[RMDB]
RNA sequence: GGGAACGACUCGAGUAGAGUCGAAAAAAAGAACUCUUUGGAAAUGGCUCCUUUGAGUUGGUUGGAUGCAUGAACAAGGGUUUGAUUGAUAAGCAUGUCAUCACCGGUGAAAACGAUAACGUUCACACUGUCUUCGAUAAUUCGUUAUCGAAGACAGAAAAGAAACAACAACAACAAC
Reactivity to DMS in 0.01 (KOAc 150mM, MgCl2 10mM, bicine 150mM(pH8.5), 24C), signal-to-noise 3, nucleotides 027 to 126: a100a030a150g010a060a020c020u000c000u000u010u000g010g000a040a150a100u010g010g000c150u010c000c010u010u010u010g000a070g010u010u010g010g010u000u010g020g010a040u010g000c030a050u000g010a070a110c070a030a070g010g010g010u000u000u000g010a120u000u010g000a130u010a040a090g000c050a030u000g000u000c030a040u000c030a080c060c030g010g020u010g000a050a040a040a080c100g010a100u020a070a110c120g000u000u010c030a040c100a210
Reactivity to 2A3 in 0.01 (KOAc 150mM, MgCl2 10mM, bicine 150mM(pH8.5), 24C), signal-to-noise 2, nucleotides 027 to 126: a000a010a020g130a030a030c000u050c020u080u080u020g020g060a110a160a190u220g230g000c080u080c000c000u040u010u030g080a010g000u080u040g070g000u110u140g070g000a030u020g020c030a000u000g030a110a030c020a090a030g230g040g000u190u110u130g140a130u020u050g060a050u060a160a010g070c010a020u050g070u160c010a010u020c000a000c040c010g020g010u090g020a070a100a000a000c050g040a050u100a100a020c040g000u030u040c030a020c020a000
Annotation:
This 177-nucleotide RNA was probed chemically with DMS and 2A3. For DMS the reverse transcriptase was MarathonRT. For DMS, 3,185 sequencing reads were counted.